RNA sequence: GGGAACGACUCGAGUAGAGUCGAAAAGAAGAGAGUCGACGCAAGCGACGAUAACUGCGGAACGGUAACCGUAGUACCGUAAGGUCAUGGCACGCGAAAGCGAAAGAACGAAUCAUGCCAUAAGAGACGUACUAUGGAGUUUCGACUCCAUAGUACGAAAAGAAACAACAACAACAAC
Reactivity to DMS in 0.01 (KOAc 150mM, MgCl2 10mM, bicine 150mM(pH8.5), 24C), signal-to-noise 7, nucleotides 027 to 126: g020a140a070g010a070g000a110g010u000c030g000a100c060g010c150a080a120g010c060g010a030c040g010a150u030a070a080c030u000g010c030g000g000a120a090c120g000g010u030a050a110c020c010g010u020a030g010u000a030c030c020g000u010a060a040g000g010u010c070a040u000g010g020c010a180c030g000c010g020a090a070a150g010c010g030a060a090a100g000a080a100c150g000a080a070u020c080a120u020g010c000c020a000u020a050a090g000a140g020a210
Reactivity to 2A3 in 0.01 (KOAc 150mM, MgCl2 10mM, bicine 150mM(pH8.5), 24C), signal-to-noise 7, nucleotides 027 to 126: g140a040a020g080a010g010a000g020u050c020g010a110c040g020c090a100a060g030c020g030a030c040g010a040u070a070a030c020u030g010c010g010g030a080a050c060g090g070u100a050a060c010c010g020u030a020g010u010a040c000c010g030u050a040a060g020g000u070c020a020u020g010g000c010a000c040g020c010g030a100a040a010g020c020g040a070a080a050g070a080a040c080g030a020a050u110c030a050u080g010c000c000a030u050a070a060g080a010g010a020

An RNA of 177 nucleotides, treated with DMS and 2A3 and read out base by base. For DMS the reverse transcriptase was MarathonRT. For DMS, 17,400 sequencing reads were counted. For 2A3, 12,437 sequencing reads were counted.